[RMDB]
RNA sequence: GGGAACGACUCGAGUAGAGUCGAAAAAACUCUUUAAGGCAAUAACGAACUAAUUCUAAGCAAGUAAUGGAGAAAUGCCAGGGUCACUAUCUAGCCAUAAUAGUGCUUGACAGUAUGAUACUACCUGAAUAUGGUAAACCGUUCGCGGUUUACCAAAGCCCACAUAUAGUUUCGACUAUAUGUGGGCAAAAGAAACAACAACAACAAC
Reactivity to DMS in 0.01 (KOAc 150mM, MgCl2 10mM, bicine 150mM(pH8.5), 24C), signal-to-noise 2, nucleotides 027 to 156: a060a030c040u000c050u010u000u000a170a080g000g020c040a040a040u000a030a130c090g000a030a130c020u010a050a160u000u010c060u000a090a070g030c010a050a120g030u000a060a030u010g000g010a150g000a110a070a070u000g040c030c000a080g020g030g010u010c010a040c020u000a010u000c010u000a100g030c140c110a060u000a070a110u000a050g030u000g030c050u000u000g010a010c030a040g000u020a050u020g020a130u000a080c040u000a080c040c010u030g010a070a090u000a130u010g030g010u010a020a010a020c000c010g030u000u000c260g010c030g020g000u000u000u010a000c000c010a000a030a180
Reactivity to 2A3 in 0.01 (KOAc 150mM, MgCl2 10mM, bicine 150mM(pH8.5), 24C), signal-to-noise 2, nucleotides 027 to 156: a000a010c120u180c040u110u140u040a070a010g000g000c050a070a120u110a230a060c030g050a040a000c070u100a080a050u050u070c010u090a090a000g020c020a010a040g010u070a070a020u120g000g000a030g000a070a060a000u060g000c000c010a000g000g000g030u000c000a000c000u020a030u030c020u010a010g000c000c000a040u070a090a140u090a250g140u160g060c030u050u040g000a020c000a020g040u130a060u100g030a000u010a030c060u080a100c010c010u040g040a060a070u230a060u180g000g000u000a000a000a000c000c000g030u030u020c130g020c010g050g000u000u000u000a000c000c000a000a000a000